[RMDB]
RNA sequence: GGGAACGACUCGAGUAGAGUCGAAAAGAGAUAUUGGAUAGCAGAUUGAGGUGUCACGGUCUCUGUUAUUUAGUAUCGGUACGCAGGUAGUAUUAGAUUGUGAUACCUCAAGUACUAUCAGCGUAUAGUAACUGGUAGAAUUCGUUCUAUCAGUUACAAAAGAAACAACAACAACAAC
Reactivity to 2A3 in 0.01 (KOAc 150mM, MgCl2 10mM, bicine 150mM(pH8.5), 24C), signal-to-noise 1, nucleotides 027 to 126: g050a000g020a020u130a020u130u120g050g010a000u000a010g000c010a020g030a120u010u000g000a000g000g030u010g000u020c000a000c000g010g000u010c050u000c000u000g010u010u000a120u020u150u110a070g040u010a090u140c000g000g040u190a120c050g000c000a030g000g000u120a020g040u010a150u240u060a050g000a000u000u020g000u000g000a000u000a000c010c000u030c000a000a000g000u030a000c000u010a000u000c000a020g050c040g040u090a040u000a150
Reactivity to DMS in 0.01 (KOAc 150mM, MgCl2 10mM, bicine 150mM(pH8.5), 24C), signal-to-noise 2, nucleotides 027 to 126: g000a270g000a070u010a010u000u040g000g000a020u010a040g010c130a070g040a230u010u010g010a000g010g010u000g010u000c030a000c010g020g000u000c000u020c270u000g000u020u010a090u040u060u050a260g050u020a060u050c300g000g000u000a230c300g000c170a040g000g020u000a080g010u000a040u070u020a020g060a010u000u000g000u000g010a000u010a000c020c010u000c000a010a010g000u010a030c000u000a000u000c000a040g000c070g030u010a010u020a060
An RNA of 177 nucleotides, treated with 2A3 and DMS and read out base by base. Conditions: 150 mM KOAc, 10 mM MgCl2 and 150 mM bicine (pH 8.5), 24 C. For DMS the reverse transcriptase was MarathonRT. High DMS reactivity at an A or C suggests that its Watson-Crick edge is free.